Chemical mapping of a 207-nucleotide RNA with 2A3.
2A3 adducts were read by reverse transcription with SuperScript II with manganese.
Source: RMDB library OK3TST, as collected in RNAgym.
The 2A3 profile rests on 1,558 reads.
Conditions: 150 mM KOAc, 10 mM MgCl2 and 150 mM bicine (pH 8.5), 24 C.

[RMDB]
RNA sequence: GGGAACGACUCGAGUAGAGUCGAAAACGUCUCUCUGAUACAAAGCGAACAACGUCAGGAAUUCCCUCGCAUCGAACUAAUAAUGGAUUUGUUAUCGGGCUGGGUGAUGCAAAUAAUCCAUAUUGAUCUACACGCGCGUGUCGCGUUGGGAUACGAAGUAGGUCGUAGUGUUCGCACUACGACCUACAAAAGAAACAACAACAACAAC
Reactivity to 2A3 in 0.01 (KOAc 150mM, MgCl2 10mM, bicine 150mM(pH8.5), 24C), signal-to-noise 3, nucleotides 027 to 156: c030g060u000c010u000c000u010c030u040g020a000u030a150c130a040a070a050g010c000g030a060a030c020a020a030c070g070u060c060a020g070g000a060a060u080u030c010c000c010u060c120g040c020a090u050c010g060a040a060c050u030a110a040u160a140a110u070g030g040a060u010u020u120g030u010u130a080u100c040g010g030g040c020u050g040g000g040u080g000a030u070g050c010a000a030a080u120a030a040u040c020c010a000u020a130u100u140g030a020u020c030u070a060c000a020c040g030c000g020c070g050u100g000u200c030g000c000g010u070u150g020g010g000a020u050a110c050g000a070a040